This 207-nucleotide RNA was probed chemically with 2A3. It was measured as part of the RMDB library OK3TST. Reactivities are given for positions 27 through 156.
[RMDB]
RNA sequence: GGGAACGACUCGAGUAGAGUCGAAAAUCUUUUUGAAUCAUAUGGGAGCCAUGGAGACACAUUAGCUGAUUUUGGCAUCCGUGGGCCCAAACUACGCACCCACUGGGAUUGCUGCCCUCAACAAGUCCUACGGACUUUAUAACAAAAUCAAGAAGCAAGUUCUUUGUCAAUUCGUUGACAAAGAACUAAAAGAAACAACAACAACAAC
Reactivity to 2A3 in 0.01 (KOAc 150mM, MgCl2 10mM, bicine 150mM(pH8.5), 24C), signal-to-noise 1, nucleotides 027 to 156: u030c020u000u170u080u000u170g130a120a150u210c110a080u160a140u200g010g010g040a040g070c000c000a030u050g000g030a000g040a000c010a020c000a090u120u150a050g020c010u000g090a220u050u040u100u230g040g010c010a010u010c000c000g000u000g000g000g000c000c000c070a000a000a000c010u090a040c120g010c060a010c010c010c010a080c070u230g010g000g010a080u050u070g000c010u030g000c000c000c000u020c010a020a240c010a030a010g010u000c000c000u090a040c230g000g000a000c000u010u140u100a150u070a120a030c010a000a050a070a050u090c010a020a020g070a020a010g050c060a020